An RNA of 177 nucleotides, treated with 2A3 and DMS and read out base by base. The reactions ran in a buffer of 150 mM KOAc, 10 mM MgCl2 and 150 mM bicine (pH 8.5), at 24 C.
RNA sequence: GGGAACGACUCGAGUAGAGUCGAAAAGAUAUGGAUAGCACGAAUAGUGACGUAUUGUCAGACGUUUGGAUCGGAAACGAUCUGACCGUCUUGGAUUUAUACGUCACUACUAUGCUAUCCUAAGUCACUACUGUGUCCUGUUCGCAGGACACAGUAGAAAAGAAACAACAACAACAAC
Reactivity to 2A3 in 0.01 (KOAc 150mM, MgCl2 10mM, bicine 150mM(pH8.5), 24C), signal-to-noise 1, nucleotides 027 to 126: g030a020u110a040u160g000g000a000u000a000g010c030a020c110g120a300a300u020a030g010u010g000a000c000g000u010a000u030u030g000u010c000a000g010a000c000g050u030u030u030g020g000a000u010c010g060g000a070a100a110c000g020a000u000c000u020g010a000c000c000g000u000c000u010u180g180g000a010u160u300u060a020u010a000c010g000u000c020a000c000u000a000c000u010a010u000g020c000u000a010u000c000c010u010a040a010g010u000c020a030
Reactivity to DMS in 0.01 (KOAc 150mM, MgCl2 10mM, bicine 150mM(pH8.5), 24C), signal-to-noise 1, nucleotides 027 to 126: g020a070u030a300u010g010g000a020u000a010g040c000a000c120g030a070a130u000a000g000u000g000a010c000g050u000a000u000u000g000u000c000a070g000a000c000g000u000u000u000g010g000a010u000c020g000g000a130a100a250c040g010a000u000c010u000g000a020c060c000g010u020c010u020u000g020g010a010u010u000u010a020u000a020c020g000u000c000a000c000u000a000c120u000a300u000g000c000u000a000u000c000c010u000a010a110g000u000c090a300
Background
For DMS, 1,202 sequencing reads were counted.